[RMDB]
RNA sequence: GGGAACGACUCGAGUAGAGUCGAAAAGCUCGCACUGUUCGGUGGGCGCCUCAACCUGAGCUGAACACAUCAAAACCGAUAGCCGCUUGUCUUCGCGUGUCUUCGGGGAAUCCGACGCGGUCACAUCAAUGCACGAAAGAUUCGUCUUUCGUGCAUUAAAAGAAACAACAACAACAAC
Reactivity to DMS in 0.01 (KOAc 150mM, MgCl2 10mM, bicine 150mM(pH8.5), 24C), signal-to-noise 3, nucleotides 027 to 126: g010c020u000c030g020c110a080c080u010g020u000u000c050g030g010u000g000g010g020c070g000c020c020u000c070a060a090c060c030u000g010a070g010c050u000g020a070a090c080a060c150a080u010c090a050a080a120a120c060c020g010a060u000a070g010c030c010g010c050u010u010g000u000c080u000u000c100g020c040g010u000g000u010c060u000u000c040g000g010g010g010a090a110u000c050c030g000a070c090g010c040g000g010u010c050a050c130a060u010c100
Reactivity to 2A3 in 0.01 (KOAc 150mM, MgCl2 10mM, bicine 150mM(pH8.5), 24C), signal-to-noise 2, nucleotides 027 to 126: g040c020u030c060g020c000a070c070u130g010u250u110c040g060g020u030g020g040g010c030g080c010c000u100c030a070a120c010c030u060g040a030g000c000u020g060a080a010c020a000c000a130u110c070a040a070a050a070c010c010g030a040u080a060g000c020c000g040c050u090u070g080u070c040u100u070c060g030c010g000u050g050u020c000u020u030c020g000g000g010g070a040a050u050c020c010g050a030c030g000c030g040g040u090c040a020c000a090u130c060